[RMDB]
RNA sequence: GGGAACGACUCGAGUAGAGUCGAAAACCCCAAAACCUUACACUGAGAGCAUUUAGCCUGAUUACUCUUUAAAUCAAAUCAGGCAAUAGAGAGUAACUCGAGAGGUGAAAACCCCACAGCAUUCUGAAACGGUUACUCGGGUUCGCCCGAGUAACAACACGUAGAAUAAGUUCGCUUAUUCUACGUGAAAAGAAACAACAACAACAAC
Reactivity to 2A3 in 0.01 (KOAc 150mM, MgCl2 10mM, bicine 150mM(pH8.5), 24C), signal-to-noise 4, nucleotides 027 to 156: c020c010c030c050a070a120a030a090c030c010u160u200a050c100a050c090u150g090a020g000a000g030c040a050u020u030u060a040g020c000c000u000g000a010u000u050a050c020u030c030u180u300u180a070a070a060u230c070a040a030a000u000c000a000g000g000c010a000a000u010a000g040a000g000a000g020u050a100a060c020u010c050g030a050g010a040g080g010u030g020a040a040a000a020c000c010c010c030a060c020a060g100c040a090u110u070c030u080g050a130a100a030c040g070g000u000u000a000c000u000c000g000g010g000u020u040c110g060c030c000c000g000a000g000u000a000a000c000a000a000
Reactivity to DMS in 0.01 (KOAc 150mM, MgCl2 10mM, bicine 150mM(pH8.5), 24C), signal-to-noise 2, nucleotides 027 to 156: c080c010c000c040a050a080a140a130c090c050u010u020a140c110a120c160u000g000a070g010a060g020c050a300u000u010u000a110g020c040c010u010g030a100u000u000a080c090u000c010u000u000u000a040a110a050u000c060a060a160a080u000c010a010g000g020c010a100a060u000a110g010a090g000a090g010u010a060a100c010u000c020g020a110g010a090g020g030u000g010a110a150a120a080c000c060c030c000a140c060a060g010c090a050u000u010c060u000g010a090a070a140c110g040g010u010u000a010c000u000c010g010g010g040u000u000c300g040c000c000c000g020a040g000u000a000a010c000a060a210